An RNA of 177 nucleotides, treated with 2A3 and DMS and read out base by base. Values cover nucleotides 27 to 126. The RNA was probed in 150 mM KOAc, 10 mM MgCl2 and 150 mM bicine (pH 8.5) at 24 C.
RNA sequence: GGGAACGACUCGAGUAGAGUCGAAAAAACAAGGAAUUACUGGGAUCACAGUAUGGGGAGGGGUGAUCAGAUAAUGAGGUUAUGGGAAUUAGAGAGGAGUAACCAGGGAUCAAGACUAGGAGUAAUAAAAUAGGUCUUUGUUCGCAAAGACCUAUUUAAAAGAAACAACAACAACAAC
Reactivity to 2A3 in 0.01 (KOAc 150mM, MgCl2 10mM, bicine 150mM(pH8.5), 24C), signal-to-noise 1, nucleotides 027 to 126: a000a000c110a090a000g050g040a070a090u120u010a100c020u030g060g030g010a080u110c040a000c000a140g100u210a150u030g010g000g010g080a120g000g010g020g000u060g040a040u030c050a010g020a060u200a100a080u080g040a040g080g030u070u130a060u070g030g050g070a060a010u090u010a100g010a010g020a030g090g020a030g020u000a010a010c020c000a000g080g000g020a020u050c040a020a020g030a050c000u040a030g040g000a120g020u040a050a130u050a080
Reactivity to DMS in 0.01 (KOAc 150mM, MgCl2 10mM, bicine 150mM(pH8.5), 24C), signal-to-noise 2, nucleotides 027 to 126: a080a020c050a100a090g010g000a160a060u000u000a050c030u010g000g010g010a100u000c080a050c050a070g010u020a040u000g010g000g000g000a070g000g010g000g020u000g000a050u000c040a030g010a080u000a060a060u020g000a070g000g010u000u000a050u010g000g000g040a090a080u010u000a110g020a130g030a070g000g000a110g000u010a020a060c040c030a100g010g000g000a050u000c070a030a070g010a040c150u000a090g000g010a070g010u000a050a040u000a030